About this RNA:
Structure probing data (DMS and 2A3) for a 177-nucleotide construct. Conditions: 150 mM KOAc, 10 mM MgCl2 and 150 mM bicine (pH 8.5), 24 C. 2A3 adducts were read by reverse transcription with SuperScript II with manganese. The DMS profile rests on 4,703 reads. Reactivities are given for positions 27 through 126. DMS adducts were read by reverse transcription with MarathonRT.
[RMDB]
RNA sequence: GGGAACGACUCGAGUAGAGUCGAAAAUUUUUUUUUUUUGAAAUGCAGUCUCGCCUUGUCGCCCAGACUGGAGUGCAAUGGUGCGAUCUCUGCUCACUGCAACCUCUGCCUCCCAGGUUCAAACGAACAUUUACGCAUUAUUCGUAAUGCGUAAAUGAAAAGAAACAACAACAACAAC
Reactivity to DMS in 0.01 (KOAc 150mM, MgCl2 10mM, bicine 150mM(pH8.5), 24C), signal-to-noise 4, nucleotides 027 to 126: u020u010u000u000u000u000u010u010u000u000u040u020g010a050a050a060u000g010c070a060g010u010c030u000c050g020c020c030u000u000g020u000c050g020c030c020c010a110g000a060c070u010g010g010a070g010u000g020c040a040a030u000g010g020u000g020c050g010a060u000c060u010c050u000g010c020u000c040a060c060u000g000c040a060a070c050c020u000c030u000g010c050c020u000c030c010c030a080g000g010u010u010c080a060a050a110c180g010a060a120
Reactivity to 2A3 in 0.01 (KOAc 150mM, MgCl2 10mM, bicine 150mM(pH8.5), 24C), signal-to-noise 2, nucleotides 027 to 126: u090u000u000u030u000u000u000u010u050u000u220u100g030a090a110a000u090g000c030a000g060u050c040u030c070g050c010c050u030u070g040u090c050g020c000c010c010a010g030a090c050u050g040g020a070g010u030g030c000a060a090u080g060g010u040g030c000g060a110u000c020u000c030u160g040c000u000c010a040c050u040g000c010a010a130c000c030u040c030u000g050c010c000u000c000c030c000a030g080g000u040u080c040a080a090a040c050g020a010a010